[RMDB]
Conditions: 150 mM KOAc, 10 mM MgCl2 and 150 mM bicine (pH 8.5), 24 C. An RNA of 177 nucleotides, treated with 2A3 and DMS and read out base by base. Source: RMDB libraries RFM100 and RFMREP, as collected in RNAgym. Reactivities are given for positions 27 through 126.

RNA sequence: GGGAACGACUCGAGUAGAGUCGAAAAUGUUUAACACUCCGAAAGGAGAGGGAACCCCGGGAAUUGAAACAUCUUAGUACCGGGAGGAAGAGAAAUCAAUAGAGAUACCGUUAGUAAAGGCGAUCGAAGUUUACGUAGAUUUCGAUCUACGUAAACUAAAAGAAACAACAACAACAAC
Reactivity to 2A3 in 0.01 (KOAc 150mM, MgCl2 10mM, bicine 150mM(pH8.5), 24C), signal-to-noise 6, nucleotides 027 to 126: u060g010u000u090u030a130a060c050a010c020u000c000c000g020a050a030a030g020g010a010g020a070g020g030g020a020a020c000c000c000c000g000g010g030a020a030u040u000g040a150a180a070c060a200u080c020u040u060a010g000u000a000c000c000g010g030g010a020g040g020a080a020g040a000g040a050a090a030u140c060a030a100u110a110g100a010g010a030u070a040c030c020g030u060u060a030g020u110a070a090a080g040g030c030g010a010u050c020g060a080
Reactivity to DMS in 0.01 (KOAc 150mM, MgCl2 10mM, bicine 150mM(pH8.5), 24C), signal-to-noise 8, nucleotides 027 to 126: u020g010u010u020u010a100a200c110a090c020u010c000c000g010a090a090a220g010g000a020g020a150g000g010g010a140a140c060c000c000c000g010g000g000a120a160u010u000g000a060a130a130c170a090u010c020u000u010a040g010u000a110c000c010g000g000g010a040g010g010a100a070g000a090g000a090a060a050u010c070a140a100u020a080g000a100g000a100u020a080c060c020g000u020u020a110g010u030a060a060a090g010g000c060g000a060u000c060g000a130